[RMDB]
RNA sequence: GGGAACGACUCGAGUAGAGUCGAAAAUCCGGAGUCACUGGAAACACUCAUGCUUGUAGCUUUACUAGGUGCUAUGACAGCAGGCAUCUUCCUGUUUUUCAUGCAAGGGAAAGGAAUAGGGAAAUUGGAUAACGAAACACUUCGGUGUUUCGUUAUCAAAAGAAACAACAACAACAAC
Reactivity to 2A3 in 0.01 (KOAc 150mM, MgCl2 10mM, bicine 150mM(pH8.5), 24C), signal-to-noise 2, nucleotides 027 to 126: u020c010c000g030g010a040g040u070c060a020c080u050g050g050a040a110a020c050a010c030u050c010a040u110g010c030u060u070g030u060a040g020c000u130u110u130a070c050u070a050g110g000u040g000c030u090a040u150g050a050c020a020g010c000a000g010g020c000a070u020c000u040u030c000c010u030g030u080u060u000u040u060c030a040u070g020c060a070a060g100g000g030a030a050a070g020g070a020a050u110a090g000g000g110a050a060a060u140u120g140
Reactivity to DMS in 0.01 (KOAc 150mM, MgCl2 10mM, bicine 150mM(pH8.5), 24C), signal-to-noise 3, nucleotides 027 to 126: u000c020c010g010g020a120g020u000c050a070c080u010g000g000a090a080a090c100a030c050u010c030a060u000g010c030u000u000g010u000a040g010c070u010u030u000a140c130u010a080g020g030u010g000c030u010a020u000g000a070c290a080g010c030a070g000g010c170a020u000c100u010u000c030c040u010g010u000u000u000u020u010c080a060u000g000c090a070a080g000g000g000a030a030a090g010g020a050a060u000a050g000g010g010a040a070a120u010u000g010